Notes:
This 177-nucleotide RNA was probed chemically with 2A3 and DMS. DMS adducts were read by reverse transcription with MarathonRT.

RNA sequence: GGGAACGACUCGAGUAGAGUCGAAAAGAUAUGGAAGCGCUUUCUAUGAAGCACACUGUUCCGUCGGAAACGACAUGUGUGUGGAGAAAGCUCGCUUCCUAAGUCAAAACGGAUGUUCGCAUCCGAACGGCAUAUAACACUUCGGUGUUAUAUGCCGAAAAGAAACAACAACAACAAC
Reactivity to 2A3 in 0.01 (KOAc 150mM, MgCl2 10mM, bicine 150mM(pH8.5), 24C), signal-to-noise 2, nucleotides 027 to 126: g010a010u000a010u050g000g010a000a010g010c010g050c050u180u000u040c010u060a300u100g000a010a010g070c000a010c010a000c010u060g130u300u270c250c210g000u030c010g000g010a010a010a010c000g000a080c150a210u040g000u010g000u000g000u000g000g010a030g000a010a000a000g010c020u010c030g000c000u010u010c000c000u000a000a000g000u020c040a010a010a060a130c020g000g000a010u020g020u120u100c240g010c120a010u000c010c010g000a110a040
Reactivity to DMS in 0.01 (KOAc 150mM, MgCl2 10mM, bicine 150mM(pH8.5), 24C), signal-to-noise 1, nucleotides 027 to 126: g020a030u020a040u040g000g000a020a010g030c000g020c000u030u000u000c000u000a280u010g000a110a270g010c000a020c010a010c010u020g000u050u030c300c260g010u000c010g020g000a040a010a050c000g040a020c020a120u000g000u000g010u000g000u000g000g000a010g020a000a000a020g030c030u020c060g010c000u010u010c000c000u000a000a080g000u000c000a050a040a100a230c020g010g000a000u010g020u000u000c170g030c000a000u000c000c000g000a020a100
For 2A3, 2,528 sequencing reads were counted.